[RMDB]
RNA sequence: GGGAACGACUCGAGUAGAGUCGAAAAGCUCUGGAAUUGAGGCCCCUCUAACAAUAAUUCAAAACUACUUCGCAGAGUAAUCUGCCGAAUCGUAGGAUGCCCAUUACUAUCUAUUUUUGGAGCAUCUAAAACUGUCAGUGCUUCGGCACUGACAGAAGGGUAGUAUAAAGUUCGCUUUAUACUACCCAAAAGAAACAACAACAACAAC
Reactivity to 2A3 in 0.01 (KOAc 150mM, MgCl2 10mM, bicine 150mM(pH8.5), 24C), signal-to-noise 3, nucleotides 027 to 156: g040c020u000c020u010g060g090a110a080u050u060g030a050g030g010c020c000c000c000u050c130u140a160a100c050a100a110u150a070a070u160u030c060a070a060a030a060c010u010a020c010u010u010c000g000c000a010g000a010g010u040a100a110u010c010u020g070c100c040g030a020a010u070c050g020u000a020g000g050a000u000g010c010c000c000a020u050u050a090c070u080a100u200c030u100a240u090u130u000u030u040g010g000a150g030c000a010u000c000u080a050a080a030a090c000u000g000u000c000a000g000u000g000c000u030u050c060g050g000c000a010c000u000g000a000c000a000g000a010a000
Reactivity to DMS in 0.01 (KOAc 150mM, MgCl2 10mM, bicine 150mM(pH8.5), 24C), signal-to-noise 2, nucleotides 027 to 156: g050c010u000c020u000g010g000a080a110u000u010g000a080g010g020c080c050c050c000u000c060u010a100a250c070a100a140u000a080a050u010u000c030a080a110a210a120c020u000a080c020u000u000c010g060c000a020g010a040g000u000a110a150u000c000u000g000c020c050g000a010a050u000c170g010u000a140g000g030a040u000g050c010c030c070a120u010u000a060c170u020a110u000c150u010a160u010u010u010u000u010g040g010a100g040c000a000u000c010u000a020a010a050a240c010u000g000u000c000a020g040u010g020c020u000u000c300g030g020c000a010c010u000g000a010c010a000g000a020a060